[RMDB]
RNA sequence: GGGAACGACUCGAGUAGAGUCGAAAACACGAUGUACGGACACAGGUGGAUAGGCCAGCGGCCCUCCUUGCCCACACGCACGCCGUCGAUCUCGUGGUACAGCUCGGCGUACUCCAUCGCCGUGCCCUUCUUGCGCUGUACGUGGGUGUACAGGUCCAGUGAGAAGGGUUUUCGAACCCUUCUCACUAAAAGAAACAACAACAACAAC
Reactivity to 2A3 in 0.01 (KOAc 150mM, MgCl2 10mM, bicine 150mM(pH8.5), 24C), signal-to-noise 1, nucleotides 027 to 156: c030a030c080g070a060u030g130u270a000c030g010g060a020c050a020c080a130g000g040u000g020g050a120u090a090g010g000c080c080a060g130c240g200g070c000c000c060u080c010c000u000u030g050c020c070c010a000c000a010c010g120c000a020c130g020c000c010g020u000c040g000a070u010c040u020c110g000u010g000g060u140a020c030a090g060c000u060c010g020g000c010g000u030a090c010u000c150c020a090u070c030g000c010c000g000u030g020c000c000c000u070u150c000u040u080g030c110g000c000u020g000u010a000c010g010u160g160g230g040u260g040u000a000c010a000g060g040u000c060c080
The record gives the reactivity of an RNA of 207 nucleotides to 2A3. Source: RMDB library OK3TST, as collected in RNAgym. The reactions ran in a buffer of 150 mM KOAc, 10 mM MgCl2 and 150 mM bicine (pH 8.5), at 24 C.